[RMDB]
The record gives the reactivity of an RNA of 177 nucleotides to DMS and 2A3. The DMS profile rests on 2,203 reads.

RNA sequence: GGGAACGACUCGAGUAGAGUCGAAAAGAAAAGAAAACCGAAAAGCUCUCGUGACACAAGAGGAAAACUCGAUAAUAAGUGUUGCGUACUUAUUACGUCACUAGAAUAGUGCGUCGGAGCAAGAAAAGGCAAUCUAUAACUUCGGUUAUAGAUUGCCAAAAGAAACAACAACAACAAC
Reactivity to DMS in 0.01 (KOAc 150mM, MgCl2 10mM, bicine 150mM(pH8.5), 24C), signal-to-noise 2, nucleotides 027 to 126: g000a080a060a050a130g000a100a030a100a120c000c000g020a020a060a090a260g000c040u000c060u000c060g030u010g020a030c010a040c180a070a110g000a030g010g010a070a060a160a130c000u010c000g000a130u060a050a060u000a050a030g010u000g020u100u010g000c180g010u010a000c110u010u000a070u000u000a010c220g010u000c010a000c000u000a010g030a100a130u030a060g030u030g000c040g000u010c000g000g010a020g040c050a030a060g000a050a050a120a080
Reactivity to 2A3 in 0.01 (KOAc 150mM, MgCl2 10mM, bicine 150mM(pH8.5), 24C), signal-to-noise 3, nucleotides 027 to 126: g020a060a020a020a000g120a010a120a040a020c010c090g010a010a030a030a040g000c010u020c000u020c060g050u030g010a000c020a000c030a100a090g000a000g020g070a010a140a010a060c020u050c030g030a030u080a220a060u050a150a080g030u040g080u150u090g050c070g030u040a000c040u090u210a040u040u030a010c100g040u040c050a010c040u020a050g070a240a120u180a100g060u100g050c090g030u020c030g030g000a020g030c010a010a070g040a100a070a040a000
Source: RMDB library OK1LIB, as collected in RNAgym. Conditions: 150 mM KOAc, 10 mM MgCl2 and 150 mM bicine (pH 8.5), 24 C. For DMS the reverse transcriptase was MarathonRT.